[RMDB]
Structure probing data (DMS and 2A3) for a 177-nucleotide construct. It was measured as part of the RMDB library OK1LIB. For 2A3 the reverse transcriptase was SuperScript II with manganese. The RNA was probed in 150 mM KOAc, 10 mM MgCl2 and 150 mM bicine (pH 8.5) at 24 C.
RNA sequence: GGGAACGACUCGAGUAGAGUCGAAAAUCGGCCGCUCCAUGGCUUGGGCGGCAAUGGCGCCUCGCCCGGCCUCCACAGGCUGGCGGUGGACUGAAUGCCGACGGCGUAAGUCAGACCGAGCCGGGACGGCGGCGUUUAGAUUCGUCUAAACGCCGCCAAAAGAAACAACAACAACAAC
Reactivity to DMS in 0.01 (KOAc 150mM, MgCl2 10mM, bicine 150mM(pH8.5), 24C), signal-to-noise 2, nucleotides 027 to 126: u020c040g000g020c000c010g010c170u020c010c030a090u030g050g030c040u020u010g000g020g010c060g000g000c000a010a020u000g010g020c180g000c010c000u000c010g000c060c020c130g020g000c000c000u020c140c300a150c190a080g020g000c020u000g000g020c050g000g010u040g020g000a250c090u010g040a150a050u020g000c000c010g020a250c140g000g000c020g010u010a080a060g000u000c020a240g010a110c090c030g000a030g000c000c010g000g000g030a000c140
Reactivity to 2A3 in 0.01 (KOAc 150mM, MgCl2 10mM, bicine 150mM(pH8.5), 24C), signal-to-noise 4, nucleotides 027 to 126: u060c020g040g000c010c000g020c090u020c020c040a160u140g050g000c060u030u050g010g030g030c000g010g040c000a010a030u030g020g000c060g010c000c000u010c000g000c030c040c010g020g000c030c000u110c050c070a160c040a050g020g020c010u020g020g020c010g010g020u140g040g010a040c090u100g070a140a060u100g000c050c020g030a120c110g010g000c000g030u110a120a020g010u040c010a000g050a040c010c030g000a010g000c000c000g010g010g010a000c020